[RMDB]
RNA sequence: GGGAACGACUCGAGUAGAGUCGAAAACAUCUUUCCUCCCUACACAGUGACUCCAGCUUGGGAGGGGCAGGGCUAGGCUGAGCCAUCACUCCCUGUGGUGUCUGCCUGCCACGUGCAGCUCUGGAGUAAAACCUGGAGAAGUUCGCUUCUCCAGGAACUACGAAGACUAGUUCGCUAGUCUUCGUAGAAAAGAAACAACAACAACAAC
Reactivity to 2A3 in 0.01 (KOAc 150mM, MgCl2 10mM, bicine 150mM(pH8.5), 24C), signal-to-noise 3, nucleotides 027 to 156: c040a090u110c060u090u150u070c010c000u050c000c010c000u170a090c190a050c050a120g160u040g130a010c000u000c010c000a010g030c010u030u020g010g010g000a000g000g000g000g000c020a020g030g030g000c030u280a010g020g000c010u050g060a010g060c030c010a040u040c010a000c040u150c020c080c010u060g000u000g000g000u030g100u000c000u010g000c010c010u010g020c000c030a120c040g190u080g010c010a060g000c020u020c010u090g000g000a000g000u000a000a030a030a010c000c000u000g000g000a010g000a000a000g010u060u190c180g020c170u000u000c000u000c000c000a000g000g000a000a000
Reactivity to DMS in 0.01 (KOAc 150mM, MgCl2 10mM, bicine 150mM(pH8.5), 24C), signal-to-noise 1, nucleotides 027 to 156: c090a060u010c130u010u000u010c040c070u020c050c000c020u010a180c170a200c200a150g010u000g020a110c000u000c000c010a120g000c090u000u000g020g010g040a010g070g000g000g020c000a110g030g010g010c070u010a040g010g020c040u000g000a300g030c010c000a090u000c040a040c040u000c040c040c000u000g000u000g040g020u030g010u000c090u030g000c040c010u040g020c000c040a070c040g080u010g040c000a120g020c090u010c040u000g010g030a070g030u010a040a060a010a130c010c000u000g000g020a040g020a040a010g000u010u010c300g000c010u000u000c010u010c010c000a010g000g010a000a090
An RNA of 207 nucleotides, treated with 2A3 and DMS and read out base by base.
The data come from the RNA Mapping Database (RMDB), library M2RFOK.
Values cover nucleotides 27 to 156.
The RNA was probed in 150 mM KOAc, 10 mM MgCl2 and 150 mM bicine (pH 8.5) at 24 C.
2A3 adducts were read by reverse transcription with SuperScript II with manganese.
DMS adducts were read by reverse transcription with MarathonRT.
For 2A3, 2,135 sequencing reads were counted.